[RMDB]
RNA sequence: GGGAACGACUCGAGUAGAGUCGAAAAGGAUGACAAGGGGCAGAGACCCAGCAGGAAUAAAGAUAUGGGUCACUAAUCCAGGAAAAGAGACAAGAUCUGCUGAGGUGCUUGCUGAAAGGGCAGGAAAUACAUAAUGGGUAGUAGAAAAACGUAGUUAUAUACGACUGAUAUUCGUAUCAGUCGUAUAAAAAGAAACAACAACAACAAC
Reactivity to DMS in 0.01 (KOAc 150mM, MgCl2 10mM, bicine 150mM(pH8.5), 24C), signal-to-noise 2, nucleotides 027 to 156: g000g010a090u000g020a100c060a080a060g010g050g030g040c060a090g010a130g000a100c020c030c000a010g000c040a140g020g040a130a090u010a120a090a130g010a180u010a090u000g000g000g060u010c050a060c090u000a080a110u000c030c040a300g030g000a030a030a070a130g010a170g000a030c030a090a130g000a140u010c020u000g030c020u010g030a110g010g030u000g000c040u010u000g010c010u000g000a030a090a080g010g010g040c010a070g000g000a050a040a060u000a080c050a010u000a040a050u030g020g010g010u000a050g050u000a100g000a050a040a020a040a130c050g050u010a080g010u000u010a220
Reactivity to 2A3 in 0.01 (KOAc 150mM, MgCl2 10mM, bicine 150mM(pH8.5), 24C), signal-to-noise 2, nucleotides 027 to 156: g020g000a030u060g020a010c000a040a110g020g000g010g010c010a020g030a000g010a100c000c010c000a000g050c010a020g050g090a100a120u130a120a270a030g020a000u130a100u160g040g000g000u030c020a000c030u070a020a050u050c030c020a000g040g050a060a080a000a000g070a000g000a030c030a050a040g000a070u010c020u030g010c010u010g000a020g060g000u040g000c010u030u030g000c000u010g010a030a010a020g030g000g000c000a000g000g070a030a060a000u170a040c050a050u150a060a040u080g000g020g000u050a070g040u040a060g080a020a040a020a010a000c020g040u040a020g060u100u090a030
Structure probing data (DMS and 2A3) for a 207-nucleotide construct. The reactions ran in a buffer of 150 mM KOAc, 10 mM MgCl2 and 150 mM bicine (pH 8.5), at 24 C. 2A3 adducts were read by reverse transcription with SuperScript II with manganese.